[RMDB]
RNA sequence: GGGAACGACUCGAGUAGAGUCGAAAAGAGAAAUAAGACCCUCGAUUGUGAAAAAUACUGUUAUUAUAAAUAACAGUAUAGAGCGCAAGAGUCUAGCUAGUAAGUAGGAUUCUCAUAAGGAAUCAUUUUUACCUAAUAUAUUCGUAUAUUAGGUAAAAAAAGAAACAACAACAACAAC
Reactivity to DMS in 0.01 (KOAc 150mM, MgCl2 10mM, bicine 150mM(pH8.5), 24C), signal-to-noise 2, nucleotides 027 to 126: g000a150g000a130a090a080u030a170a200g000a130c020c040c010u010c080g000a200u010u010g000u000g000a020a070a080a050a010u000a000c010u010g000u000u010a000u000u030a180u040a110a060a030u010a000a020c000a030g000u010a000u000a050g030a120g030c000g000c020a040a070g010a120g000u030c010u000a070g020c080u000a020g010u000a070a030g030u000a100g010g000a020u000u000c000u000c080a070u050a140a230g000g010a020a040u020c000a090u020u010
Reactivity to 2A3 in 0.01 (KOAc 150mM, MgCl2 10mM, bicine 150mM(pH8.5), 24C), signal-to-noise 3, nucleotides 027 to 126: g020a000g020a010a110a010u160a060a040g040a060c010c010c020u000c040g130a160u040u010g000u000g060a270a090a070a080a000u000a000c000u000g010u000u000a010u040u070a180u200a130a300a010u020a010a000c000a010g000u000a000u010a010g000a010g010c010g000c010a040a000g010a000g050u020c020u050a040g040c040u020a070g060u090a190a120g030u090a050g110g030a030u020u000c070u010c040a060u040a140a060g010g010a010a000u000c030a020u020u000